[RMDB]
RNA sequence: GGGAACGACUCGAGUAGAGUCGAAAAAUCAGCCUUCGUUCUGUAAACGGGGUUGGAUCCGACUGUCAUAGGCUCUCCAACCCAACUCCUACUCAAUACGUCCUCGUCGUACAGAACGGUAACAUGUAAAACGAAGGCUGCUUCGGCAGCCUUCGAACAUGGACUUAGAGUUCGCUCUAAGUCCAUGAAAAGAAACAACAACAACAAC
Reactivity to 2A3 in 0.01 (KOAc 150mM, MgCl2 10mM, bicine 150mM(pH8.5), 24C), signal-to-noise 1, nucleotides 027 to 156: a010u100c070a040g060c030c040u060u100c050g000u000u020c000u000g000u000a000a000a140c040g000g000g030g050u000u000g050g050a060u240c010c000g010a010c090u080g170u230c030a110u110a230g000g000c010u000c000u010c030c000a000a000c000c010c010a000a000c010u010c000c000u080a070c000u040c100a110a110u110a190c040g040u020c040c050u040c070g100u040c020g000u010a000c000a060g010a020a000c010g020g030u080a050a090c090a090u160g070u200a070a050a000a050c030g030a000a010g000g000c000u000g010c000u050u050c080g030g000c000a000g000c000c000u000u000c000g000a010a000